An RNA of 177 nucleotides, treated with DMS and 2A3 and read out base by base. Reactivities are given for positions 27 through 126. For DMS the reverse transcriptase was MarathonRT. The reactions ran in a buffer of 150 mM KOAc, 10 mM MgCl2 and 150 mM bicine (pH 8.5), at 24 C.
[RMDB]
RNA sequence: GGGAACGACUCGAGUAGAGUCGAAAAAAAAAAGAUAUGGAUGCGAUAAGUACUGAAUGAACGAAGAACGAGCUCGGAAACGAGCUCGGGAGUUCGCGUACUUUUGACGCAUCCUAAGUCAAAAAAAGAAAAUACGUUACUUCGGUAACGUAUUUUCAAAAGAAACAACAACAACAAC
Reactivity to DMS in 0.01 (KOAc 150mM, MgCl2 10mM, bicine 150mM(pH8.5), 24C), signal-to-noise 1, nucleotides 027 to 126: a000a110a070a110a110a040g000a020u000a300u010g000g010a000u000g010c000g020a180u030a000a000g010u000a000c000u010g050a120a110u010g000a020a000c030g000a060a120g000a120a140c030g000a000g020c000u000c000g030g000a050a030a110c020g020a000g000c010u000c000g000g010g000a060g030u000u000c010g000c090g010u000a000c010u000u000u010u010g030a120c100g040c000a000u000c000c010u000a030a090g020u040c020a020a010a060a100a060a140a150
Reactivity to 2A3 in 0.01 (KOAc 150mM, MgCl2 10mM, bicine 150mM(pH8.5), 24C), signal-to-noise 1, nucleotides 027 to 126: a000a000a060a090a030a020g010a020u090a020u060g020g000a000u000g010c050g030a040u000a080a010g000u000a040c090u240g280a230a300u300g000a000a010c050g170a300a040g000a040a000c000g000a000g000c020u000c020g000g000a000a020a090c050g020a010g030c010u000c020g000g000g010a050g000u000u000c010g000c030g050u000a010c000u000u160u080u260g240a100c020g000c000a000u000c010c010u000a030a000g020u000c050a040a050a040a040a000a000a080